About this RNA: The data come from the RNA Mapping Database (RMDB), library M2PK50. An RNA of 177 nucleotides, treated with 2A3 and DMS and read out base by base. As a SHAPE reagent, 2A3 marks flexible, mostly unpaired nucleotides at the ribose 2'-OH. 2A3 adducts were read by reverse transcription with SuperScript II with manganese. The 2A3 profile rests on 31,944 reads. Values cover nucleotides 27 to 126. Values are in units of 0.01, from 0 to 300, in steps of 10.
RNA sequence: GGGAACGACUCGAGUAGAGUCGAAAAUCCUCACGUUUCGACGUGAGGAGAACUCUAGCAAGGGAAGGGAACCCUCGGGAAGGGCUCCCAAGGCGAUCUGAACAAGGGCCAAAUUCGUUUGGCCCAAGUUGAACUGAAUAUUCGUAUUCAGUUCAACAAAAGAAACAACAACAACAAC
Reactivity to 2A3 in 0.01 (KOAc 150mM, MgCl2 10mM, bicine 150mM(pH8.5), 24C), signal-to-noise 8, nucleotides 027 to 126: u000c000c000u000c000a010c000g010u010u060u120c230g120a010c000g000u010g000a010g000g000a000g000a010a020c010u010c030u070a030g070c040a090a060g080g030g080a100a090g030g010g020a040a050c010c020c000u020c060g170g020g040a050a020g020g000g010c010u000c000c000c000a000a000g020g010c020g050a100u040c050u100g050a080a030c040a120a190g000g000g000c000c000a010a000a010u100u100c190g040u020u000u010g000g000c000c000c000a000a000
Reactivity to DMS in 0.01 (KOAc 150mM, MgCl2 10mM, bicine 150mM(pH8.5), 24C), signal-to-noise 9, nucleotides 027 to 126: u000c000c000u000c000a010c000g010u000u000u010c170g010a020c000g020u010g000a020g010g000a000g000a050a090c030u000c020u000a090g010c070a080a150g010g010g010a150a180g000g000g000a030a030c010c000c000u000c060g010g000g020a190a060g000g000g010c020u000c000c000c000a040a030g000g010c040g000a090u000c050u000g000a080a090c250a110a140g010g000g010c000c000a000a010a020u000u010c200g010u000u000u000g000g000c000c000c000a000a020